[RMDB]
This 177-nucleotide RNA was probed chemically with DMS and 2A3.
The 2A3 profile rests on 751 reads.
2A3 adducts were read by reverse transcription with SuperScript II with manganese.
Values are in units of 0.01, from 0 to 300, in steps of 10.
The reactions ran in a buffer of 150 mM KOAc, 10 mM MgCl2 and 150 mM bicine (pH 8.5), at 24 C.
RNA sequence: GGGAACGACUCGAGUAGAGUCGAAAAGCAACUGAACAUACGCUCGCUGCAUCACACAGUAGUGAGGCCAUAUGCGCCGCCCAGUGCGAAAGAUUUUGAUUCAACCGCUUGGAAAGAAUAAGGGUCAGUCUGGCCUAUGUUUCGACAUAGGCCAGACAAAAGAAACAACAACAACAAC
Reactivity to DMS in 0.01 (KOAc 150mM, MgCl2 10mM, bicine 150mM(pH8.5), 24C), signal-to-noise 1, nucleotides 027 to 126: g000c020a000a040c240u040g000a020a040c120a080u020a120c300g080c110u000c020g140c010u000g130c020a050u000c080a000c180a130c200a060g130u000a020g000u000g000a020g000g000c010c070a080u000a070u000g000c060g000c000c060g040c080c000c000a300g120u000g020c080g120a300a130a000g010a040u000u070u040u000g020a170u000u010c130a070a150c050c110g000c050u000u000g000g060a000a170a100g050a070a000u000a020a100g000g000g000u000c000a300
Reactivity to 2A3 in 0.01 (KOAc 150mM, MgCl2 10mM, bicine 150mM(pH8.5), 24C), signal-to-noise 2, nucleotides 027 to 126: g020c000a000a100c000u060g000a090a050c010a100u220a090c010g000c000u000c020g000c000u040g000c000a020u060c060a130c030a030c000a060g000u080a060g060u060g000a060g040g020c000c000a110u240a050u170g030c050g000c010c030g030c000c040c080a140g000u160g020c060g060a100a110a040g020a070u000u050u060u300g150a140u110u100c020a090a010c020c000g000c070u060u050g060g050a080a090a090g010a020a020u170a210a190g020g000g050u030c080a000